This 177-nucleotide RNA was probed chemically with DMS and 2A3. DMS adducts were read by reverse transcription with MarathonRT. Source: RMDB library OK2TRN, as collected in RNAgym.
RNA sequence: GGGAACGACUCGAGUAGAGUCGAAAAGGCGCGUACUAGUCGAUCACGGUACUGCGCGUGGCCGCGCUGGCCAGUACGCGCAGCGCGGCGCGUACGCGCUGGCGCAUGGAUCAGGCCUCGGCCAUCAAUACUUUGACCUGUUCGCAGGUCAAAGUAUAAAAGAAACAACAACAACAAC
Reactivity to DMS in 0.01 (KOAc 150mM, MgCl2 10mM, bicine 150mM(pH8.5), 24C), signal-to-noise 3, nucleotides 027 to 126: g030g030c000g010c000g010u000a020c000u010a120g040u000c100g000a100u000c140a130c100g020g010u000a030c020u010g050c030g030c000g030u000g000g010c020c010g040c300g010c100u000g000g000c000c030a070g010u000a040c050g010c010g000c000a020g010c060g040c020g000g010c040g000c110g010u010a030c030g010c090g020c000u000g010g010c050g000c040a090u000g010g000a090u010c080a090g000g010c030c020u010c110g030g030c020c020a050u000c080a060
Reactivity to 2A3 in 0.01 (KOAc 150mM, MgCl2 10mM, bicine 150mM(pH8.5), 24C), signal-to-noise 2, nucleotides 027 to 126: g040g000c020g000c000g020u010a000c010u090a090g080u060c080g130a120u190c100a040c090g050g060u120a050c020u130g030c000g010c010g040u060g040g000c030c050g000c040g100c220u080g010g010c020c000a010g070u050a020c040g010c010g000c000a030g040c070g000c020g040g040c010g010c030g060u080a020c020g000c010g010c000u010g010g000c030g030c020a070u080g100g000a110u070c050a060g070g000c000c040u020c070g070g000c000c000a010u040c040a030